Notes:
The record gives the reactivity of an RNA of 207 nucleotides to DMS and 2A3. DMS adducts were read by reverse transcription with MarathonRT. Source: RMDB library OK3TST, as collected in RNAgym.
RNA sequence: GGGAACGACUCGAGUAGAGUCGAAAAAUAGACGACAUGGAGGUUUAUUUCAGGAACCCCGGAGGCAUGGCGGGUAAUGAUGUCCCUCAAGUCUGGUCUCCUGGCAGAGAGCACAUGGGCAUUAGAUACCAUCAACAUCCUGCUGUAUGAUGACAACUAUGUUGUAGGAAUUCGUUCCUACAACAUAAAAAGAAACAACAACAACAAC
Reactivity to DMS in 0.01 (KOAc 150mM, MgCl2 10mM, bicine 150mM(pH8.5), 24C), signal-to-noise 3, nucleotides 027 to 156: a080u000a080g010a090c050g020a110c090a070u010g030g010a100g050g010u000u000u000a060u010u010u000c100a130g020g000a070a100c030c010c000c050g040g020a060g010g020c040a050u000g000g030c060g000g020g040u010a050a090u000g010a100u010g020u000c000c010c030u000c060a070a140g010u000c040u000g010g000u000c010u000c020c010u000g000g030c170a100g020a110g000a060g020c060a070c080a130u010g010g000g000c030a110u000u000a080g010a230u010a050c010c010a040u010c060a040a060c070a060u000c020c030u000g000c030u000g000u000a090u000g010a110u000g020a060c060a040a100c130
Reactivity to 2A3 in 0.01 (KOAc 150mM, MgCl2 10mM, bicine 150mM(pH8.5), 24C), signal-to-noise 4, nucleotides 027 to 156: a000u060a020g040a020c040g010a010c070a060u140g070g000a050g020g060u050u080u070a130u040u160u120c070a050g040g040a060a070c020c010c000c030g020g000a030g010g040c060a030u040g000g050c040g030g020g030u030a060a020u050g050a010u040g060u060c010c000c000u020c060a060a040g050u030c050u060g060g020u010c010u030c020c020u030g040g000c080a010g050a010g030a010g120c030a050c020a140u110g000g000g000c010a010u040u000a030g030a070u050a050c010c020a020u070c020a030a050c020a070u030c000c030u020g030c020u020g030u080a100u150g090a050u040g010a020c030a060a010c080

Annotation:
Reactivities are given for positions 27 through 156.